[RMDB]
RNA sequence: GGGAACGACUCGAGUAGAGUCGAAAAUGAGUGAGCGAGACUCCGUCUGCAAUCCCGGCACCUCGGGAAGCCGAGGCAGGCAGAUCACUCGCGGUUAGGAGCUGGAGACCAGCCGAUCCAACAUGGCUGAAUUAAUACGCUUCGGCGUAUUAAUUCAAAAAGAAACAACAACAACAAC
Reactivity to DMS in 0.01 (KOAc 150mM, MgCl2 10mM, bicine 150mM(pH8.5), 24C), signal-to-noise 4, nucleotides 027 to 126: u010g020a070g000u000g000a090g030c040g010a040g010a170c050u000c010c130g000u010c000u000g000c020a160a120u000c010c000c010g010g020c080a130c020c030u000c040g010g000g010a140a080g000c000c010g000a020g000g000c060a050g010g010c000a030g000a020u000c200a070c010u000c010g010c080g010g010u000u000a070g000g000a120g030c030u010g000g000a180g000a140c100c030a070g020c020c050g020a100u000c040c050a060a050c080a090u000g010g020c150
Reactivity to 2A3 in 0.01 (KOAc 150mM, MgCl2 10mM, bicine 150mM(pH8.5), 24C), signal-to-noise 2, nucleotides 027 to 126: u290g000a050g020u020g010a050g030c050g040a050g060a150c020u040c060c030g030u020c000u020g000c010a050a290u080c030c020c000g030g050c040a060c010c010u060c050g030g000g070a160a070g060c020c010g020a000g010g000c000a020g040g020c010a010g000a030u030c030a010c040u020c000g010c000g030g030u080u130a110g050g030a030g000c020u060g020g040a210g060a180c030c020a000g000c000c020g040a020u080c030c030a030a040c030a110u140g080g000c020